About this RNA: Chemical mapping of a 177-nucleotide RNA with 2A3 and DMS. The data come from the RNA Mapping Database (RMDB), library RFM100. Conditions: 150 mM KOAc, 10 mM MgCl2 and 150 mM bicine (pH 8.5), 24 C. High 2A3 reactivity points to a flexible backbone, as in loops and unpaired stretches. Values cover nucleotides 27 to 126. 2A3 adducts were read by reverse transcription with SuperScript II with manganese.
RNA sequence: GGGAACGACUCGAGUAGAGUCGAAAAAAGGUACAUCAAGACGAUCGAGAGAUCGAGCAACCGGGGUCAGUCCCACGGUGCUAAGCGAAGUUCGCAGAUGUGCAGAUUUAAUCUGAAAAAAUACUGGAUCCCUUGUGAACUUCGGUUCACAAGGGAUAAAAGAAACAACAACAACAAC
Reactivity to 2A3 in 0.01 (KOAc 150mM, MgCl2 10mM, bicine 150mM(pH8.5), 24C), signal-to-noise 2, nucleotides 027 to 126: a010a000g120g020u020a000c000a000u040c010a010a060g140a050c010g020a000u000c000g000a000g010a010g000a070u010c010g000a000g000c000a030a110c000c000g000g000g000g000u140c070a020g180u300c070c000c000a010c010g000g000u000g000c010u020a010a010g000c000g050a170a000g070u090u060c050g000c020a010g010a030u000g000u010g000c000a000g000a020u120u210u200a040a060u090c080u090g150a070a000a000a000a000a060u160a160c050u030g130g000
Reactivity to DMS in 0.01 (KOAc 150mM, MgCl2 10mM, bicine 150mM(pH8.5), 24C), signal-to-noise 1, nucleotides 027 to 126: a070a050g040g000u000a000c000a060u010c040a080a130g040a300c000g000a000u020c000g000a150g000a230g000a000u000c020g000a060g000c000a020a010c000c030g010g000g000g000u050c170a090g010u060c050c000c000a020c040g010g000u020g000c000u000a100a110g000c000g070a120a140g070u000u050c000g000c040a100g000a000u040g000u000g030c000a120g000a110u020u000u000a190a060u000c080u000g020a000a020a010a050a000a100u040a040c030u000g000g000